[RMDB]
RNA sequence: GGGAACGACUCGAGUAGAGUCGAAAAGGGGUCUCGAAACUAAGAGGGCAGAGAGGUGUAGCUGAAGCCUCCACGGCUACACUACCCACCUCUGCCUCCCCACCUUAGCUUCGAGACGGAGGCACCCAAAAGCUCAGAGGGUUCGCCCUCUGAGCAACUGUUCUUAUAUGUUCGCAUAUAAGAACAGAAAAGAAACAACAACAACAAC
Reactivity to DMS in 0.01 (KOAc 150mM, MgCl2 10mM, bicine 150mM(pH8.5), 24C), signal-to-noise 1, nucleotides 027 to 156: g040g010g060g020u000c000u000c000g020a000a060a070c030u030a030a070g000a200g100g000g060c040a010g060a050g010a200g000g000u000g000u000a040g030c020u000g100a030a290g000c100c000u010c040c030a300c100g000g030c000u000a060c030a040c000u000a000c040c000c070a300c030c010u000c040u000g030c000c000u000c300c030c020c030a300c000c010u000u000a030g030c040u000u000c000g000a070g030a000c100g000g010a000g040g060c000a060c010c010c000a010a080a020a160g000c000u000c000a040g000a020g030g000g050u000u000c300g040c010c010c000u000c000u050g000a000g000c000a000a000
Reactivity to 2A3 in 0.01 (KOAc 150mM, MgCl2 10mM, bicine 150mM(pH8.5), 24C), signal-to-noise 1, nucleotides 027 to 156: g070g010g000g010u010c010u000c010g000a000a010a000c000u000a000a000g000a000g000g000g000c000a000g000a000g000a000g000g010u000g000u000a000g010c000u020g020a130a020g020c000c000u030c000c000a010c020g000g000c010u010a000c010a010c000u040a040c010c060c020a060c010c000u010c000u010g010c000c000u030c010c000c000c000a010c000c000u000u010a000g000c010u000u000c000g010a010g000a000c000g000g000a000g010g000c000a030c000c000c000a060a170a000a020g000c010u000c000a000g000a000g030g030g000u080u180c240g150c030c000c010u000c000u000g000a000g000c000a000a000
Structure probing data (DMS and 2A3) for a 207-nucleotide construct. The reactions ran in a buffer of 150 mM KOAc, 10 mM MgCl2 and 150 mM bicine (pH 8.5), at 24 C. For DMS, 1,259 sequencing reads were counted. For 2A3 the reverse transcriptase was SuperScript II with manganese.